[RMDB]
Chemical mapping of a 177-nucleotide RNA with DMS and 2A3. The DMS profile rests on 1,192 reads. Reactivities are given for positions 27 through 126. As a SHAPE reagent, 2A3 marks flexible, mostly unpaired nucleotides at the ribose 2'-OH. Conditions: 150 mM KOAc, 10 mM MgCl2 and 150 mM bicine (pH 8.5), 24 C. For 2A3 the reverse transcriptase was SuperScript II with manganese.

RNA sequence: GGGAACGACUCGAGUAGAGUCGAAAAUGUGUGCUCGAGAGCCUCCCUGUCCGACAGAGCUUUUAGAUCUUCUGAUCUUUGCCUGGAGGAUAUCGCUUAUGCUUCAAGCGAUUCUCGGAAUAAUUAAUACGUGGGUAGGAUUCGUCCUACCCACGUAAAAAGAAACAACAACAACAAC
Reactivity to DMS in 0.01 (KOAc 150mM, MgCl2 10mM, bicine 150mM(pH8.5), 24C), signal-to-noise 1, nucleotides 027 to 126: u030g010u010g030u000g000c010u000c020g010a040g000a200g010c080c080u000c000c010c010u010g000u000c000c000g000a160c020a010g000a140g000c010u010u000u000u010a010g010a010u000c000u000u030c200u010g010a010u000c000u000u000u000g010c000c000u000g010g000a300g000g000a010u000a020u000c040g010c020u000u000a060u000g020c140u000u020c180a050a020g000c000g010a020u010u000c020u000c040g020g010a110a060u010a050a130u030u000a060a200
Reactivity to 2A3 in 0.01 (KOAc 150mM, MgCl2 10mM, bicine 150mM(pH8.5), 24C), signal-to-noise 1, nucleotides 027 to 126: u100g140u010g000u050g070c040u030c150g030a040g010a000g000c000c010u000c000c000c000u020g050u040c010c000g010a000c070a010g100a090g050c000u150u120u000u120a020g010a000u040c000u140u190c180u260g000a010u000c000u000u000u070g010c040c000u010g000g000a020g000g000a060u020a000u010c020g000c000u050u090a030u220g110c030u090u230c140a020a000g000c000g030a020u140u000c040u000c020g030g080a090a020u130a090a110u160u090a060a030